RNA sequence: GGGAACGACUCGAGUAGAGUCGAAAAGAUAUGGAUUGGCGUAGGGAGACGUGGUCGGAAACGACCAUACGUCGAAGAACUACCCAAUCCUAAGUCAAACUACACCUAGCUUCGGCUAGGUGUAGAAGACGAAUAACAUCUUCGGAUGUUAUUCGUCAAAAGAAACAACAACAACAAC
Reactivity to 2A3 in 0.01 (KOAc 150mM, MgCl2 10mM, bicine 150mM(pH8.5), 24C), signal-to-noise 2, nucleotides 027 to 126: g000a000u030a010u090g000g000a000u010u000g000g030c170g040u010a020g000g050g100a220g000a030c020g020u000g000g010u000c010g000g000a020a000a010c000g010a000c010c000a020u190a050c040g010u000c020g010a160a050g100a020a020c010u000a010c000c000c010a000a010u010c000c000u000a010a010g010u000c040a070a080a080c000u000a000c010a000c010c000u000a000g000c010u060u070c300g110g000c000u010a000g000g000u000g000u000a000g000a000a000
Reactivity to DMS in 0.01 (KOAc 150mM, MgCl2 10mM, bicine 150mM(pH8.5), 24C), signal-to-noise 3, nucleotides 027 to 126: g000a020u000a170u030g010g000a020u000u000g000g000c300g020u000a000g000g030g000a240g010a010c000g030u000g000g010u000c000g020g000a020a060a060c010g020a000c020c000a060u010a030c040g020u020c000g000a130a150g010a210a200c000u000a000c010c000c000a020a000u000c000c000u000a000a070g020u010c020a160a100a200c000u000a010c000a010c000c000u000a010g010c000u010u030c300g020g000c010u000a010g000g010u000g000u000a010g010a080a100